[RMDB]
RNA sequence: GGGAACGACUCGAGUAGAGUCGAAAACUACAUACAUUCUUUGAAAUGUUUCACAUAUUAUACAGCUUUUUUCCUUUCCAAAGAAAAGCCAAUGGGAGAGUUAAACUGACCUGGUGUAGCAGAGCAGUAGCACUAGGAAUUUCGAUUCCUAGUGCUAAAAAGAAACAACAACAACAAC
Reactivity to 2A3 in 0.01 (KOAc 150mM, MgCl2 10mM, bicine 150mM(pH8.5), 24C), signal-to-noise 6, nucleotides 027 to 126: c010u040a030c030a040u140a050c000a070u070u000c060u150u170u220g060a080a050a030u030g020u010u130u150c100a100c050a040u170a070u150u250a080u130a110c070a020g030c040u100u030u010u010u050u110c020c040u040u060u070c030c010a070a140a030g090a030a070a030a020g080c030c040a060a060u090g020g060g010a080g000a010g020u060u200a090a070a040c020u090g100a260c000c010u030g010g010u040g000u040a010g020c010a000g000a010g060c010a000g030
Reactivity to DMS in 0.01 (KOAc 150mM, MgCl2 10mM, bicine 150mM(pH8.5), 24C), signal-to-noise 4, nucleotides 027 to 126: c030u000a080c070a060u030a070c060a060u000u020c020u000u020u040g020a080a030a060u010g000u010u000u000c030a100c090a070u030a070u020u030a050u030a110c140a110g000c020u020u000u000u000u000u010c010c040u020u000u010c070c050a080a090a070g000a070a040a030a040g000c030c070a040a060u020g010g000g000a070g010a100g010u000u020a040a070a070c010u000g010a100c070c020u000g000g010u010g000u000a020g000c020a030g000a060g000c060a080g030